[RMDB]
RNA sequence: GGGAACGACUCGAGUAGAGUCGAAAACGGGGUUGGCUAUAGUUGAUUUCGAACCGUAUGCUUAUGUAUAUGGAAUGAUUUGUACGCUUUACGCAUGUGUACACUCACUCUCAGUUCACUCUUGUGAGAGAAGGGAGAGAGAGAUAUUUUGCGAUUAGGUAUGUUUUAUGUUCGCAUGGGGCAUAUCAAAAGAAACAACAACAACAAC
Reactivity to 2A3 in 0.01 (KOAc 150mM, MgCl2 10mM, bicine 150mM(pH8.5), 24C), signal-to-noise 2, nucleotides 027 to 156: c020g000g000g010g000u010u030g030g000c040u030a020u050a120g020u040u030g040a170u020u040u050c030g030a020a010c010c000g000u010a000u000g010c050u250u130a060u280g010u010a020u000a020u000g000g000a110a050u100g040a090u060u030u090g010u010a010c010g000c000u040u060u070a050c030g000c010a010u020g010u000g000u010a000c010a000c010u020c000a040c010u010c000u000c020a100g030u030u030c020a050c010u020c030u100u200g080u170g100a010g000a010g010a030a060g060g000g000a010g000a000g000a000g000a000g000a010u010a060u130u150u060u050g010c010g020a040u030u110a040
Reactivity to DMS in 0.01 (KOAc 150mM, MgCl2 10mM, bicine 150mM(pH8.5), 24C), signal-to-noise 2, nucleotides 027 to 156: c060g010g020g060g020u010u010g030g030c060u030a090u000a130g010u000u010g000a150u000u000u000c010g010a030a140c010c020g010u000a010u000g000c040u010u010a100u020g030u000a020u000a050u010g020g030a080a110u010g020a080u000u010u000g020u010a040c090g020c050u010u000u000a140c050g030c050a050u010g020u000g020u000a030c030a120c060u010c010a150c000u010c010u000c000a060g000u010u010c040a100c010u010c020u000u010g020u010g010a080g010a080g020a060a110g000g010g020a050g000a050g010a070g020a030g010a130u000a030u000u000u000u000g000c020g010a140u000u000a080
An RNA of 207 nucleotides, treated with 2A3 and DMS and read out base by base.